This 177-nucleotide RNA was probed chemically with DMS and 2A3. Values cover nucleotides 27 to 126. The RNA was probed in 150 mM KOAc, 10 mM MgCl2 and 150 mM bicine (pH 8.5) at 24 C. DMS adducts were read by reverse transcription with MarathonRT. 2A3 adducts were read by reverse transcription with SuperScript II with manganese.

RNA sequence: GGGAACGACUCGAGUAGAGUCGAAAAGGUCAGUUCGGUAAGCGGGUGGUCGGGGCGCACCACCACCGUGUGCUCCCAGGUGUAGACCGGCAGGGUCGCCAGGCCGGGCGUCAGCGCCAGCGACUCACCACUAAAUAUGCUUCGGCAUAUUUAGUGGAAAAGAAACAACAACAACAAC
Reactivity to DMS in 0.01 (KOAc 150mM, MgCl2 10mM, bicine 150mM(pH8.5), 24C), signal-to-noise 5, nucleotides 027 to 126: g010g010u000c060a080g000u010u010c070g010g000u010a070a120g010c100g010g000g030u010g010g020u000c130g030g000g010g000c040g020c050a040c040c060a080c110c070a040c070c070g000u010g020u010g010c040u000c030c010c040a100g010g010u000g000u000a130g010a060c030c020g010g020c080a100g000g000g000u010c030g000c030c030a100g010g000c040c060g000g000g010c080g010u000c090a070g010c080g000c010c020a190g010c020g000a050c030u000c050a200
Reactivity to 2A3 in 0.01 (KOAc 150mM, MgCl2 10mM, bicine 150mM(pH8.5), 24C), signal-to-noise 2, nucleotides 027 to 126: g050g000u060c040a020g040u110u100c010g040g020u100a100a020g050c070g040g010g020u070g000g050u080c070g010g020g000g060c030g000c010a020c030c010a040c040c020a030c000c040g050u080g010u050g010c010u040c000c010c000a040g000g030u120g030u040a080g020a050c000c020g010g020c000a030g030g000g020u030c040g040c040c020a040g020g010c020c000g040g020g030c030g040u070c080a010g050c020g010c080c000a010g000c000g020a030c000u010c030a080